[RMDB]
This 207-nucleotide RNA was probed chemically with 2A3. High 2A3 reactivity points to a flexible backbone, as in loops and unpaired stretches. Reactivities are rounded to 0.1 and cut off at 0 and 3. 2A3 adducts were read by reverse transcription with SuperScript II with manganese. Values cover nucleotides 27 to 156.
RNA sequence: GGGAACGACUCGAGUAGAGUCGAAAAGUGCCUCGUCGGCCCGGCAUGCCAACCUGAUCCCAAGUUCAAGGUGGUUUCUCUGGCCUUCCAGAGAGAUGCGCGUCGGAAGAACCGACGAACAAACCUUAAAACAAAACGACGUUCGCGUCGUUUUGAACCACUACUCCAUGUUCGCAUGGAGUAGUGGAAAAGAAACAACAACAACAAC
Reactivity to 2A3 in 0.01 (KOAc 150mM, MgCl2 10mM, bicine 150mM(pH8.5), 24C), signal-to-noise 2, nucleotides 027 to 156: g060u020g040c010c020u070c010g000u010c000g030g030c000c000c000g010g000c020a060u150g040c020c010a110a110c020c000u020g020a040u060c050c090c060a080a170g020u050u040c090a070a000g010g020u010g010g000u010u100u000c000u010c000u000g040g000c050c050u260u120c020c000a000g000a000g000a010g020a070u150g060c050g010c030g030u010c000g000g000a090a030g010a060a120c000c000g000a010c000g020a020a010c030a030a030a080c020c050u150u210a110a070a000a070c000a070a030a000a000c050g030a000c000g000u000u070c290g000c000g050u020c000g000u000u000u000u000g020a010a000